[RMDB]
The record gives the reactivity of an RNA of 207 nucleotides to 2A3 and DMS. Source: RMDB library RNAMAK, as collected in RNAgym.

RNA sequence: GGGAACGACUCGAGUAGAGUCGAAAACAAUGGUUCGCCAUUGAGAGAGCGUACUACUGGACAUGCUAGGUCAUAAGACAGGUCGUUCCCAAAUAGGAACGACCAAUGACGUGACGCUAGCAACAGCCAGUAUCGCCGUGUUUCGUUUCGACGAAAACUGAAACAAAGGGUUCGCCCUUUGUUUCAGAAAAGAAACAACAACAACAAC
Reactivity to 2A3 in 0.01 (KOAc 150mM, MgCl2 10mM, bicine 150mM(pH8.5), 24C), signal-to-noise 1, nucleotides 027 to 156: c020a000a010u020g000g040u010u030c230g100c030c000a010u060u050g040a010g000a020g000a000g030c010g070u140a140c040u000a020c000u040g040g000a030c000a170u040g000c020u000a000g010g000u020c000a000u000a090a120g060a200c030a030g000g010u000c000g020u000u010c010c000c000a000a110a030u040a020g000g000a020a000c000g000a000c070c050a120a010u110g020a040c050g010u000g000a000c020g040c300u000a010g000c000a040a010c010a000g000c000c000a040g010u000a000u130c000g000c020c000g050u020g040u040u050u140c170g000u000u020u090c170g170a190c150g030a020a300a030a010
Reactivity to DMS in 0.01 (KOAc 150mM, MgCl2 10mM, bicine 150mM(pH8.5), 24C), signal-to-noise 1, nucleotides 027 to 156: c000a040a010u000g000g000u000u000c300g030c020c000a070u010u000g000a160g010a100g000a110g050c010g010u020a030c080u000a090c020u000g010g010a200c080a280u010g040c000u000a030g000g030u000c020a000u000a140a260g010a240c090a070g010g030u000c010g030u010u010c000c000c010a000a050a130u010a030g040g000a000a030c000g040a010c050c050a030a000u010g000a110c260g020u000g010a040c010g030c010u000a010g020c010a020a010c060a070g000c000c040a020g030u030a040u000c010g000c010c040g020u000g040u010u000u000c070g010u000u030u000c060g020a120c080g020a020a030a100a250